[RMDB]
RNA sequence: GGGAACGACUCGAGUAGAGUCGAAAAAGCGUGAAAGAUCGCUGACAAAAGUGCCCGCACCCUGUUUCGAGCCAAAAAAGCAGGAGGGCGAAAGUAGGUUAAGAGACAUCGCAAGACCUUCAAAACGAUGGUGUGCUAUUUUCGAAUAGCACACCAUAAAAGAAACAACAACAACAAC
Reactivity to 2A3 in 0.01 (KOAc 150mM, MgCl2 10mM, bicine 150mM(pH8.5), 24C), signal-to-noise 2, nucleotides 027 to 126: a000g030c000g000u000g020a050a060a030g120a060u300c030g000c000u000g000a000c070a000a200a000a000g090u110g010c030c000c030g030c080a120c020c040c000u000g100u020u020u050c090g090a110g060c060c070a000a100a000a100a170a000g020c030a020g000g100a050g020g000g000c030g040a030a020a000g050u090a000g000g090u050u060a120a000g100a000g030a050c040a040u130c050g020c030a000a130g010a030c000c000u000u050c220a020a010a050a050c080g080
Reactivity to DMS in 0.01 (KOAc 150mM, MgCl2 10mM, bicine 150mM(pH8.5), 24C), signal-to-noise 4, nucleotides 027 to 126: a000g020c010g010u010g000a110a120a200g010a140u020c000g010c010u020g000a150c190a060a100a080a080g000u010g000c020c000c010g040c060a200c180c000c000u000g010u000u000u010c060g010a090g020c220c300a000a050a120a080a040a030g010c010a030g020g000a040g010g010g020c000g000a010a000a030g010u010a050g000g000u000u010a070a180g000a080g000a130c120a060u000c090g010c080a070a140g000a050c000c000u000u000c070a060a020a100a080c170g010